[RMDB]
About this RNA
Structure probing data (2A3) for a 207-nucleotide construct. The data come from the RNA Mapping Database (RMDB), library M2RFOK. Values cover nucleotides 27 to 156. Conditions: 150 mM KOAc, 10 mM MgCl2 and 150 mM bicine (pH 8.5), 24 C.
RNA sequence: GGGAACGACUCGAGUAGAGUCGAAAAAGAGCCGGAUACGUCCGGCUCAACGGGGGAUACGUGUGGUGCCGUCCGCUCCCCCUAUGGCAUAACAAAUGCACCACACACUAGGGUACGGCCUAGUGAAAAAAUCCCUACAUGUUCGCAUGUAGGGAAAGCUCUAGGUAAUCUUCGGAUUACCUAGAGCAAAAGAAACAACAACAACAAC
Reactivity to 2A3 in 0.01 (KOAc 150mM, MgCl2 10mM, bicine 150mM(pH8.5), 24C), signal-to-noise 2, nucleotides 027 to 156: a010g030a020g020c030c010g010g020a010u030a010c150g050u000c000c000g000g020c000u020c000a000a000c000g000g000g000g000g000a030u050a080c020g010u010g000u000g020g000u000g000c010c000g000u020c020c050g040c000u070c000c000c000c000c020u010a170u150g080g010c040a080u030a280a020c020a080a150a020u040g000c000a010c000c000a000c000a010c000a000c010u000a000g010g070g010u210a060c080g140g000c000c000u010a010g000u000g050a050a000a000a000a010a040u020c010c000c000u000a000c000a000u020g010u030u020c120g000c170a000u000g000u000a000g020g000g000a000a020a000